[RMDB]
RNA sequence: GGGAACGACUCGAGUAGAGUCGAAAAUAAACUCGAUGCAACAGUUCCUGGAUAUCCUAAGCUUUUCAUUACUCGUGAAGAGGCUGUAAGGCAAGUUCGAAGCUGGAUAGGCUUCGAUGUUGAGGGUCACCUGACUAGUUCGCUAGUCAGAAAAGAAACAACAACAACAAC
Reactivity to 2A3 in 0.01 (KOAc 150mM, MgCl2 10mM, bicine 150mM(pH8.5), 24C), signal-to-noise 9, nucleotides 027 to 129: u150a020a080a000c000u010c010g020a030u160g050c080a110a050c020a150g000u020u020c000c000u000g010g030a090u060a060u140c020c020u050a070a030g010c000u050u010u000u020c010a030u010u150a180c030u040c080g060u070g150a140a050g020a040g100g010c030u040g040u090a030a010g030g010c050a080a080g060u020u010c000g010a000a010g000c020u050g060g130a210u170a200g000g000c000u000u000c010g000a010u020g050u040u080g040a070g020g030g000u040c010a020c060
Reactivity to DMS in 0.01 (KOAc 150mM, MgCl2 10mM, bicine 150mM(pH8.5), 24C), signal-to-noise 8, nucleotides 027 to 129: u020a050a090a060c010u000c040g000a050u000g040c140a050a070c140a130g000u000u000c000c000u000g020g010a110u020a040u040c020c010u040a100a080g000c010u030u000u000u010c020a040u000u020a120c110u050c060g030u030g000a030a030g000a000g000g040c090u030g020u050a050a040g000g000c080a060a040g010u000u000c020g030a020a030g030c010u010g010g020a170u060a100g000g000c020u010u000c020g010a010u010g000u000u040g000a050g020g010g030u000c110a090c110